This 177-nucleotide RNA was probed chemically with 2A3 and DMS. Values cover nucleotides 27 to 126.
[RMDB]
RNA sequence: GGGAACGACUCGAGUAGAGUCGAAAAGUAAAGGCGGAGGAGGGUUUUGGCUUGCGCUCGGUCCGCCCGCGCGUCGUGUGGGCUGGAAUUCGUGUGUGGAGGAUGAUUAAUGCCGCGCGCCCAGGAAGUCACUAUCUACUUUCGAGUAGAUAGUGACAAAAGAAACAACAACAACAAC
Reactivity to 2A3 in 0.01 (KOAc 150mM, MgCl2 10mM, bicine 150mM(pH8.5), 24C), signal-to-noise 2, nucleotides 027 to 126: g040u010a060a000a070g050g000c010g040g000a040g020g040a030g000g030g000u000u050u120u170g020g020c010u030u100g000c030g000c020u040c010g000g050u000c010c010g000c000c000c000g000c010g010c030g120u230c120g010u040g010u030g030g000g010c030u120g050g070a080a080u150u110c050g010u060g020u040g020u040g100g030a040g050g020a040u060g000a010u050u220a140a040u140g030c000c000g000c000g000c010g030c010c020c010a030g060g040a100a020
Reactivity to DMS in 0.01 (KOAc 150mM, MgCl2 10mM, bicine 150mM(pH8.5), 24C), signal-to-noise 4, nucleotides 027 to 126: g010u000a060a090a120g010g010c050g020g010a090g010g020a100g020g000g010u010u000u010u000g000g010c110u000u000g020c050g010c030u000c020g010g000u010c010c030g010c020c000c000g010c030g010c080g020u010c150g010u000g030u000g010g000g010c000u010g030g000a070a080u000u000c040g020u000g020u010g020u000g010g000a110g000g000a080u000g000a090u000u010a070a100u010g010c040c020g000c090g020c090g000c010c030c020a130g000g010a100a120
The data come from the RNA Mapping Database (RMDB), library M2PK90. For 2A3 the reverse transcriptase was SuperScript II with manganese.